[RMDB]
RNA sequence: GGGAACGACUCGAGUAGAGUCGAAAAGAUAUGGAACCCAUACAAGCAACAGCGUAUGGGUCGGAAACGACCUUUACGACAUGCUUGAUGGGUUCCUAAGUCAAAGAUCUCACGUUCGCGUGAGAUCGUUAAAUCGGUUGUUCGCAACCGAUUUAACAAAAGAAACAACAACAACAAC
Reactivity to 2A3 in 0.01 (KOAc 150mM, MgCl2 10mM, bicine 150mM(pH8.5), 24C), signal-to-noise 7, nucleotides 027 to 126: g000a010u020a000u050g000g000a000a000c000c010c020a010u160a280c020a020a010g010c120a130a130c080a300g050c010g000u000a000u020g010g000g000u010c000g000g000a000a020a000c000g000a000c000c030u010u020u010a000c020g100a050c100a220u300g000c000u000u010g000a000u000g020g000g000u000u000c000c000u000a000a000g000u000c010a020a100a140g010a000u000c000u010c000a000c010g050u100u100c300g010c000g180u010g010a000g000a000u000c000
Reactivity to DMS in 0.01 (KOAc 150mM, MgCl2 10mM, bicine 150mM(pH8.5), 24C), signal-to-noise 9, nucleotides 027 to 126: g010a020u000a150u010g000g010a020a000c000c000c000a010u000a170c010a010a010g010c000a120a090c290a110g000c010g010u000a010u000g000g000g010u000c000g010g000a020a020a060c000g010a010c000c000u000u000u000a010c000g010a030c110a300u010g020c000u000u010g000a020u000g000g000g010u000u000c000c000u000a000a050g000u000c020a150a130a150g000a010u000c000u000c000a010c010g010u000u020c210g030c010g030u000g000a010g000a000u000c000
An RNA of 177 nucleotides, treated with 2A3 and DMS and read out base by base. Values are in units of 0.01, from 0 to 300, in steps of 10. Conditions: 150 mM KOAc, 10 mM MgCl2 and 150 mM bicine (pH 8.5), 24 C.